[RMDB]
RNA sequence: GGGAACGACUCGAGUAGAGUCGAAAACUCAAGGCCUUCGGGCCUUGAGAAAAGGCAUCGUAUCUUUCCUUCGAAGCCAAACAUGAAACAUGAAAGCAGAGAAAAGUUUUGGGUUCGCCCAAAACAAGUAAUAGUAGUAGUUCGCUACUACUAUUACAAAAGAAACAACAACAACAAC
Reactivity to 2A3 in 0.01 (KOAc 150mM, MgCl2 10mM, bicine 150mM(pH8.5), 24C), signal-to-noise 6, nucleotides 027 to 126: c000u000c000a000a000g000g000c010c020u130u180c300g060g000g000c020c000u020u000g000a000g000a000a030a000a000g010g000c020a050u020c040g020u070a040u030c060u020u040u020c010c000u030u030c020g020a030a000g010c020c010a050a170a010c040a050u130g100a260a180a030c030a030u060g080a160a060a010g030c040a020g050a010g030a100a070a050a090g000u010u000u010u000g020g020g010u030u050c180g100c010c000c000a000a010a000a000c010a030a020
Reactivity to DMS in 0.01 (KOAc 150mM, MgCl2 10mM, bicine 150mM(pH8.5), 24C), signal-to-noise 7, nucleotides 027 to 126: c010u000c000a010a000g010g020c000c010u000u010c240g040g020g030c000c000u000u000g000a010g010a020a050a080a150g010g020c040a060u000c050g010u000a070u000c040u000u000u000c020c020u010u000c030g000a300a110g010c000c030a040a130a200c080a040u000g000a130a110a090c120a040u000g010a060a190a200g010c050a030g000a300g000a060a070a090a100g000u000u000u010u000g000g000g010u010u010c200g000c000c000c000a000a010a010a010c010a030a100

This 177-nucleotide RNA was probed chemically with 2A3 and DMS. It was measured as part of the RMDB library M2PK50. Values cover nucleotides 27 to 126.